[RMDB]
RNA sequence: GGGAACGACUCGAGUAGAGUCGAAAAUUAUGAAACUUUUGAACCUCGUAGUGACAUUGAGCGUGAUUUUCUCGCUAUGUCAGAGGAGAGUUUUGUAGAAAGGUAUGGUAAAGACUUAGGCCUACAACACAUACUGUAUGGUGAAGUUGAUAAGCCCGUACACAACCACGUUCGCGUGGUUGUGUACAAAAGAAACAACAACAACAAC
Reactivity to 2A3 in 0.01 (KOAc 150mM, MgCl2 10mM, bicine 150mM(pH8.5), 24C), signal-to-noise 1, nucleotides 027 to 156: u020u000a050u020g000a000a000a010c020u000u130u220u180g120a110a130c010c000u000c000g070u130a100g230u020g090a020c010a040u120u270g050a070g020c040g000u070g050a120u060u070u300u220c070u000c030g000c000u000a000u010g010u000c020a010g000a000g010g000a020g000a000g000u030u000u000u000g030u010a040g070a060a070a000g070g010u050a030u070g070g100u050a130a000a000g000a020c060u050u040a020g030g020c000c000u040a010c010a120a000c160a000c010a020u110a070c030u020g040u120a130u040g020g000u040g000a130a000g000u010u010g020a020u000a150a000g000c000c000c030
An RNA of 207 nucleotides, treated with 2A3 and read out base by base. Conditions: 150 mM KOAc, 10 mM MgCl2 and 150 mM bicine (pH 8.5), 24 C. It was measured as part of the RMDB library OK3TST. 2A3 adducts were read by reverse transcription with SuperScript II with manganese.